[RMDB]
RNA sequence: GGGAACGACUCGAGUAGAGUCGAAAAGAAAACCGCAGUUGGCUAGCGGAAAGAAAGAGGCUUAACGCCAACGAAAUAAGUCGGAAAGCACGACCGACAAGAAAAGCCCUACAAUCGUGAAAGAAAAAUAUGCUAUAAUAUUCGUAUUAUAGCAUAUAAAAGAAACAACAACAACAAC
Reactivity to 2A3 in 0.01 (KOAc 150mM, MgCl2 10mM, bicine 150mM(pH8.5), 24C), signal-to-noise 8, nucleotides 027 to 126: g030a010a070a000a000c020c010g000c040a030g010u040u050g040g010c030u050a080g020c030g080g110a060a060a010g150a010a080a010g080a050g070g000c020u070u060a060a030c070g000c010c010a000a010c010g040a030a070a100u230a140a080g000u000c000g000g030a200a130a040g100c020a010c030g020a000c000c000g010a000c010a010a000g050a000a060a010a000g010c010c000c010u040a060c070a030a060u070c040g030u030g090a140a060a050g100a010a130a050a010
Reactivity to DMS in 0.01 (KOAc 150mM, MgCl2 10mM, bicine 150mM(pH8.5), 24C), signal-to-noise 6, nucleotides 027 to 126: g000a120a050a110a180c030c010g060c040a100g000u010u000g010g000c020u010a080g000c020g000g010a060a070a120g020a110a090a080g010a160g000g000c000u010u000a070a080c200g020c000c030a020a030c020g010a080a120a080u030a080a110g010u010c000g000g010a080a070a100g010c050a030c060g000a100c020c000g010a010c010a070a070g000a040a060a050a040g000c010c010c030u010a150c190a070a060u020c050g010u000g000a070a090a130g010a020a080a050a070